[RMDB]
RNA sequence: GGGAACGACUCGAGUAGAGUCGAAAAGAAAGAAAGUAGAAAUUAUAUAUUUAAGUAGUGGAUACAAAGGGCGAUUUGAUAUAAAAGUGUCGCAUUGUAUGACCUACUUAACUAGCUGAUUUUGUAAUGAACAAUGUUGGUUCGCCAACAUUGUUCAAAAAGAAACAACAACAACAAC
Reactivity to 2A3 in 0.01 (KOAc 150mM, MgCl2 10mM, bicine 150mM(pH8.5), 24C), signal-to-noise 1, nucleotides 027 to 126: g030a000a070a000g060a080a220a000g020u210a040g040a060a060a000u080u030a050u030a030u020a000u280u030u030a000a010g000u000a000g000u100g050g040a020u010a000c000a060a070a020g240g250g000c020g000a000u010u030u020g150a010u040a100u060a210a300a180a040g120u110g010u030c010g000c000a020u010u000g000u010a050u100g090a100c000c000u000a000c000u000u000a000a000c010u000a000g060c010u000g110a080u000u040u040u080g150u130a190a210